[RMDB]
RNA sequence: GGGAACGACUCGAGUAGAGUCGAAAAAACUCAGCUAGGGAGAGUAUAACAUUCAUGUUGACGAGACCUAGACGAAACACAGAGGAAAAUUAUUAAUCACUGGAUAGUAAUAGUAAUGACUCUGUGUAAAACUCUUCUACGUUCGCGUAGAAGAGAAGGUUAACAUGUACUUCGGUACAUGUUAACCAAAAGAAACAACAACAACAAC
Reactivity to DMS in 0.01 (KOAc 150mM, MgCl2 10mM, bicine 150mM(pH8.5), 24C), signal-to-noise 1, nucleotides 027 to 156: a070a060c030u000c010a070g010c000u000a030g020g000g000a110g000a230g040u020a080u000a040a040c000a140u000u000c140a120u000g020u000u000g000a110c050g000a300g010a040c000c010u000a030g050a240c030g000a160a070a050c000a020c040a030g000a000g020g010a060a140a080a020u000u010a020u000u000a140a000u020c020a130c010u000g020g080a140u010a100g030u000a020a030u000a110g010u000a020a030u000g000a300c010u000c010u000g000u000g010u000a020a010a050a170c010u000c000u000u000c000u010a000c000g000u000u000c300g070c060g000u000a020g020a020a020g000a000g000a000a020
Reactivity to 2A3 in 0.01 (KOAc 150mM, MgCl2 10mM, bicine 150mM(pH8.5), 24C), signal-to-noise 3, nucleotides 027 to 156: a000a000c010u000c000a010g000c000u010a010g020g030g000a080g010a050g050u150a150u070a300a050c050a050u070u180c090a070u260g020u060u050g050a060c020g010a000g050a050c000c000u000a000g020a030c010g010a020a030a000c000a000c000a010g010a000g020g030a060a120a070a000u020u010a010u000u040a060a080u130c030a040c090u130g130g100a130u140a240g030u020a050a030u010a050g040u010a000a060u030g030a030c000u010c000u000g000u000g000u000a010a000a000a000c000u000c000u000u000c000u000a000c000g040u030u040c260g000c000g050u000a000g000a000a000g000a000g000a030a010
Background:
The data come from the RNA Mapping Database (RMDB), library M2RFPK. This 207-nucleotide RNA was probed chemically with DMS and 2A3. The RNA was probed in 150 mM KOAc, 10 mM MgCl2 and 150 mM bicine (pH 8.5) at 24 C. For 2A3, 2,017 sequencing reads were counted. 2A3 is a SHAPE reagent: it acylates the 2'-hydroxyl of flexible nucleotides of all four kinds.